[RMDB]
Description
This 177-nucleotide RNA was probed chemically with 2A3. 2A3 adducts were read by reverse transcription with SuperScript II with manganese. Source: RMDB library OK1LIB, as collected in RNAgym. Conditions: 150 mM KOAc, 10 mM MgCl2 and 150 mM bicine (pH 8.5), 24 C. The 2A3 profile rests on 404 reads.

RNA sequence: GGGAACGACUCGAGUAGAGUCGAAAAUUUACCGUCCUGAAUUUCAGCUUUAGUGAAAGAGAAUUUAAAAUUCGAUGGAUAGGUGAGGUUUAAAAUGGACUUCAUUUUUUAGCUCCUGCCCCGAUGGGCGGAUCACCAUGUUCGCAUGGUGAUCCGCAAAAGAAACAACAACAACAAC
Reactivity to 2A3 in 0.01 (KOAc 150mM, MgCl2 10mM, bicine 150mM(pH8.5), 24C), signal-to-noise 2, nucleotides 027 to 126: u040u070u000a030c000c000g000u010c000c000u120g000a020a070u000u000u130c060a160g140c070u070u300u180a190g040u200g210a050a120a040g090a050g010a030a060u140u140u210a160a150a010a000u000u000c080g000a060u130g100g000a030u030a160g000g000u000g010a010g000g040u110u110u020a140a070a000a000u210g000g130a180c110u110u000c160a100u040u070u010u000u090u120a040g020c000u000c000c000u060g120c020c000c000c000g090a230u240g050g000